[RMDB]
RNA sequence: GGGAACGACUCGAGUAGAGUCGAAAAUGCAGAGACUCAAUGGAAGCUGUUCUAACGAAUCGAGGUGUAAUUACGUUGUGUUGGUAAUGAAACUCCCUCUAAAUUAUUAAAUUAGAGAAAGAAGGACUUUAUACAUCUAAUACACACGUAUAGAUCCGAUCAAUAAUCGGUUCGCCGAUUAUUGAUCAAAAGAAACAACAACAACAAC
Reactivity to 2A3 in 0.01 (KOAc 150mM, MgCl2 10mM, bicine 150mM(pH8.5), 24C), signal-to-noise 2, nucleotides 027 to 156: u130g020c010a020g040a020g000a130c020u020c100a060a060u080g040g000a050a000g010c030u020g030u100u020c020u090a140a090c000g070a070a060u170c050g010a060g010g050u060g010u100a130a130u090u050a020c030g030u010u010g000u050g000u010u040g040g030u030a090a080u060g020a050a010a010c010u020c020c040c000u000c020u000a070a140a120u160u130a080u140u220a140a050a130u000u000a010g000a000g030a070a240a000g060a080a000g030g000a010c000u110u160u020a030u020a060c010a010u030c000u070a060a010u080a100c050a010c010a000c020g000u000a030u020a060g080a040u020c000c060
Reactivity to DMS in 0.01 (KOAc 150mM, MgCl2 10mM, bicine 150mM(pH8.5), 24C), signal-to-noise 1, nucleotides 027 to 156: u000g060c030a060g030a300g000a070c040u000c060a080a210u010g010g010a160a160g020c040u010g030u000u000c040u010a070a160c160g010a060a060u000c040g010a010g010g030u000g010u000a060a100u000u000a100c110g010u000u020g000u000g020u010u000g000g030u000a020a120u000g020a110a090a030c010u000c030c010c010u000c000u000a000a070a130u000u000a110u000u000a070a010a170u000u010a060g020a070g010a060a040a000g010a090a170g020g000a040c040u000u000u000a060u000a120c040a030u000c010u010a060a120u000a030c020a000c080a040c000g020u000a060u000a040g010a020u000c080c110